Structure probing data (2A3 and DMS) for a 207-nucleotide construct. For DMS, 3,187 sequencing reads were counted. The reactions ran in a buffer of 150 mM KOAc, 10 mM MgCl2 and 150 mM bicine (pH 8.5), at 24 C. 2A3 adducts were read by reverse transcription with SuperScript II with manganese.
RNA sequence: GGGAACGACUCGAGUAGAGUCGAAAAGAUGGAGGGUCAGGCCUCGGACACCUCCUAUAAGAUGUAACUAUUACGAGGCCAUUAAUGGCGUUUUCGCCUAGGUGCACGACGGCGUGCGUGCCACCGUAAGACUUAAUGAAUAACACGCCGGAUACAAAUCCAGUAAUAUGUUCGCAUAUUACUGGAUAAAAGAAACAACAACAACAAC
Reactivity to 2A3 in 0.01 (KOAc 150mM, MgCl2 10mM, bicine 150mM(pH8.5), 24C), signal-to-noise 2, nucleotides 027 to 156: g140a040u080g000g000a000g010g010g010u010c030a020g010g010c000c010u010c000g010g000a020c060a160c000c010u000c010c000u060a080u030a060a030g060a020u140g060u120a020a090c060u040a080u120u110a020c000g010a000g000g000c000c000a000u000u050a010a030u070g000g000c010g080u040u030u180u250c010g040c000c000u010a060g020g000u000g010c000a000c010g030a000c010g010g000c000g000u010g000c000g000u000g000c030c060a020c000c000g030u020a040a030g040a010c010u060u200a040a050u180g130a120a070u110a110a040c000a000c000g000c000c000g000g010a030u030a030c080a030a190
Reactivity to DMS in 0.01 (KOAc 150mM, MgCl2 10mM, bicine 150mM(pH8.5), 24C), signal-to-noise 2, nucleotides 027 to 156: g020a120u000g010g060a050g010g010g000u000c020a070g030g010c000c010u000c000g020g000a040c000a070c000c000u000c030c020u000a140u000a130a130g030a130u000g020u000a120a160c140u000a160u010u000a220c010g020a060g040g000c010c030a120u010u010a040a040u010g010g010c020g020u000u010u000u000c030g060c000c020u000a080g000g000u000g050c010a130c010g000a100c020g000g010c020g000u000g000c020g020u000g030c000c010a080c010c130g010u000a060a120g010a160c130u000u010a090a140u000g000a110a130u010a050a070c010a040c010g010c010c000g010g040a260u010a060c110a060a140
It was measured as part of the RMDB library OK3TST.
The 2A3 profile rests on 3,826 reads.